Background: This 177-nucleotide RNA was probed chemically with DMS and 2A3. It was measured as part of the RMDB library OK2TRN. DMS (dimethyl sulfate) methylates the pairing face of unpaired adenines and cytosines. Values cover nucleotides 27 to 126. Values are in units of 0.01, from 0 to 300, in steps of 10.

RNA sequence: GGGAACGACUCGAGUAGAGUCGAAAAGUGAGACGUUCAAAAGUCUCUGAGACUCAUAAAUCCAGCCAGAAGGAGCGUGUCUUGGCAUGCAAGGGGACUUAGAUUUGUAUUGGUUAACCAAUGAAUCCUUUGUAACGUGUUUCGACACGUUACAAAGAAAAGAAACAACAACAACAAC
Reactivity to DMS in 0.01 (KOAc 150mM, MgCl2 10mM, bicine 150mM(pH8.5), 24C), signal-to-noise 4, nucleotides 027 to 126: g010u010g000a000g020a040c020g010u010u010c280a070a100a140a210g010u000c010u000c010u010g010a150g010a090c020u000c060a090u000a030a060a100u000c040c020a070g010c060c030a100g010a080a110g020g000a110g000c040g020u000g000u010c040u010u010g010g020c040a050u000g010c090a090a050g000g000g000g000a110c140u000u010a070g000a060u000u000u000g020u000a030u000u000g000g000u000u020a130a140c030c000a010a050u000g000a060a050u020c030
Reactivity to 2A3 in 0.01 (KOAc 150mM, MgCl2 10mM, bicine 150mM(pH8.5), 24C), signal-to-noise 3, nucleotides 027 to 126: g120u090g010a030g000a000c030g070u090u090c160a070a130a030a050g020u000c000u040c000u000g010a040g010a030c000u000c080a020u080a150a090a050u060c010c020a010g000c040c000a050g020a110a050g100g060a050g020c050g010u010g020u030c050u070u070g070g000c030a040u050g000c040a030a050g030g070g000g020a010c040u070u060a030g040a140u080u060u180g110u140a050u040u030g030g020u090u140a130a150c010c010a010a020u040g020a040a030u030c000